An RNA of 177 nucleotides, treated with 2A3 and DMS and read out base by base. Source: RMDB libraries RFM100 and RFMREP, as collected in RNAgym. DMS adducts were read by reverse transcription with MarathonRT. DMS (dimethyl sulfate) methylates the pairing face of unpaired adenines and cytosines.
RNA sequence: GGGAACGACUCGAGUAGAGUCGAAAAGUGGCGGGGGUAGCACAUCUCUCCAGCCUCAAACUAUUCCUUCCUCAGGGCAGAAUUUCCCCGUGACGCUCUCUUGUCAUCAUCACCUUCUUCUUGUCUGAGAAGAUGUUAUAUUCGUAUAACAUCUUCUAAAAGAAACAACAACAACAAC
Reactivity to 2A3 in 0.01 (KOAc 150mM, MgCl2 10mM, bicine 150mM(pH8.5), 24C), signal-to-noise 9, nucleotides 027 to 126: g050u040g010g000c020g010g010g000g010g010u080a030g080c070a050c020a260u080c050u000c000u000c030c010a030g010c010c000u030c020a100a110a010c050u080a100u070u060c010c000u020u070c010c010u040c030a040g000g040g000c030a020g060a130a090u050u030u050c010c000c000c000g050u050g030a030c030g010c020u000c000u010c000u060u080g030u040c010a040u020c000a020u040c010a090c030c000u050u050c010u070u020c010u060u110g070u060c030u050g050
Reactivity to DMS in 0.01 (KOAc 150mM, MgCl2 10mM, bicine 150mM(pH8.5), 24C), signal-to-noise 9, nucleotides 027 to 126: g020u010g010g020c050g000g000g000g000g010u030a040g020c120a110c190a100u020c040u000c020u010c020c020a080g020c010c020u010c060a070a090a120c140u020a150u010u000c010c020u000u010c030c020u000c060a070g000g010g010c080a060g000a100a100u010u010u000c010c000c010c070g010u000g010a130c090g000c030u000c030u000c030u000u000g010u000c030a050u010c050a060u010c060a080c040c020u000u000c040u000u010c030u000u000g010u010c070u020g000